[RMDB]
RNA sequence: GGGAACGACUCGAGUAGAGUCGAAAAGCGUACUACCAUAUUUGUCAGAAAGCUUUCGUACGCCAGUGAAAUACCAGCUCCCAAAUAGGAGCUGGGAGUACGAUUGCUUUCUUGGAUUUAAUAUGGUAUCGCAAACGCCCGAGUUCGCUCGGGCGAACCAUUAAUUGCUCUUCGGAGCAAUUAAUGGAAAAGAAACAACAACAACAAC
Reactivity to 2A3 in 0.01 (KOAc 150mM, MgCl2 10mM, bicine 150mM(pH8.5), 24C), signal-to-noise 2, nucleotides 027 to 156: g010c020g010u060a100c040u010a010c030c000a000u010a000u040u020u020g040u010c010a000g010a000a000a000g000c000u000u010u000c000g000u000a020c020g030c110c050a230g060u260g280a190a190a000u160a100c010c000a010g010c000u090c080c050c000a120a240a140u290a150g010g000a000g000c000u000g000g000g000a060g000u010a000c000g000a000u000u050g030c000u000u010u000c000u020u010g030g020a010u170u180u270a010a010u020a000u000g010g000u010a000u090c010g000c040a020a020a020c010g010c020c000c010g000a010g000u100u170c170g030c170u050c000g000g000g000c010g000a000a000

Description:
This 207-nucleotide RNA was probed chemically with 2A3. It was measured as part of the RMDB library RNAMAK. The 2A3 profile rests on 912 reads.